The record gives the reactivity of an RNA of 207 nucleotides to DMS and 2A3. The RNA was probed in 150 mM KOAc, 10 mM MgCl2 and 150 mM bicine (pH 8.5) at 24 C. For 2A3 the reverse transcriptase was SuperScript II with manganese. The data come from the RNA Mapping Database (RMDB), library OK3TST.
[RMDB]
RNA sequence: GGGAACGACUCGAGUAGAGUCGAAAAUGUGUUUGCCGACAAAUUGGAGAUGUUGUUGCGCGAUUGCGCGCUGACAUUAAGCUCCAAUUUCAGCUACUUGCUGUUCAAACGAAUGUGUGACAUGAUUGCAGACGAGGAAAUGGUGUGCGGCGACGAACGAUUACCUUUUGUUCGCAAAAGGUAAUCGAAAAGAAACAACAACAACAAC
Reactivity to DMS in 0.01 (KOAc 150mM, MgCl2 10mM, bicine 150mM(pH8.5), 24C), signal-to-noise 3, nucleotides 027 to 156: u010g000u000g030u010u000u000g010c010c020g010a140c060a030a020a050u000u000g020g010a200g020a060u010g000u020u000g010u000u010g020c000g020c010g020a300u000u010g050c080g020c020g000c020u010g050a020c000a040u010u010a060a140g020c010u020c000c000a010a030u000u010u000c010a070g010c040u000a060c030u000u000g020c010u000g020u010u000c040a080a090a140c080g010a090a060u000g020u000g010u000g000a070c060a110u010g010a120u000u000g040c030a050g010a090c050g020a090g040g000a060a050a120u000g010g020u000g000u000g010c020g010g030c020g010a090c060g020a080a210
Reactivity to 2A3 in 0.01 (KOAc 150mM, MgCl2 10mM, bicine 150mM(pH8.5), 24C), signal-to-noise 7, nucleotides 027 to 156: u140g070u020g010u050u020u150g030c020c010g020a080c040a020a010a010u000u000g010g000a010g020a030u040g010u090u030g070u100u050g000c020g000c020g100a210u160u300g110c030g000c000g000c030u030g020a000c000a000u110u100a150a070g020c000u000c000c000a000a000u010u000u020c000a010g010c010u050a080c040u140u160g000c000u000g010u070u070c050a080a100a040c070g070a150a090u100g070u030g040u060g100a050c020a070u090g010a100u080u110g000c010a010g080a120c050g010a030g010g040a060a050a050u110g050g020u090g030u090g050c020g010g000c020g010a020c030g010a060a030
For DMS, 8,746 sequencing reads were counted.